Overview
Structure probing data (2A3 and DMS) for a 207-nucleotide construct. For DMS, 4,765 sequencing reads were counted. For 2A3, 4,057 sequencing reads were counted. It was measured as part of the RMDB library OK3TST. DMS adducts were read by reverse transcription with MarathonRT.
[RMDB]
RNA sequence: GGGAACGACUCGAGUAGAGUCGAAAAUGCGUGGGUAUGAGCACCAGUGCUGUUAGAUGUCUUCGUACCAUAGUCAAAGCUUGAUGUGGUUUUAGUACCUAAGUCAGUACUUGAAGCCGAUGCACUAUGGCUAUGAGCCUUAACACCAUCUGCCUCAAUCUGUAGACACGUUCGCGUGUCUACAGAUAAAAGAAACAACAACAACAAC
Reactivity to 2A3 in 0.01 (KOAc 150mM, MgCl2 10mM, bicine 150mM(pH8.5), 24C), signal-to-noise 5, nucleotides 027 to 156: u150g010c070g000u050g020g020g020u120a080u160g040a020g010c020a040c040c030a040g020u020g060c030u030g020u040u050a100g020a160u070g040u070c050u100u040c110g020u020a010c000c000a020u020a010g030u050c040a050a060a110g000c050u120u120g080a060u110g100u210g060g020u010u000u000u030a010g010u000a000c020c030u070a150a050g120u140c090a010g000u040a010c020u060u160g050a010a000g000c010c020g070a080u120g000c000a010c000u020a020u020g000g000c010u020a020u070g020a010g020c020c020u070u060a030a010c020a010c020c020a040u020c020u080g050c020c030u020c010a030
Reactivity to DMS in 0.01 (KOAc 150mM, MgCl2 10mM, bicine 150mM(pH8.5), 24C), signal-to-noise 2, nucleotides 027 to 156: u000g020c040g000u000g020g030g000u000a080u000g010a070g020c040a080c030c020a060g000u010g010c010u010g020u000u010a060g010a070u000g020u000c040u000u000c060g020u000a050c030c020a040u000a010g020u000c010a090a110a100g000c080u000u000g010a070u000g050u020g060g020u000u000u000u000a010g030u000a020c010c010u000a070a180g040u030c180a080g010u000a020c010u000u010g050a010a020g040c010c020g060a120u020g000c080a120c060u000a080u000g010g010c060u000a070u000g000a100g010c040c010u000u000a040a060c010a020c070c010a080u000c070u000g000c060c030u000c020a110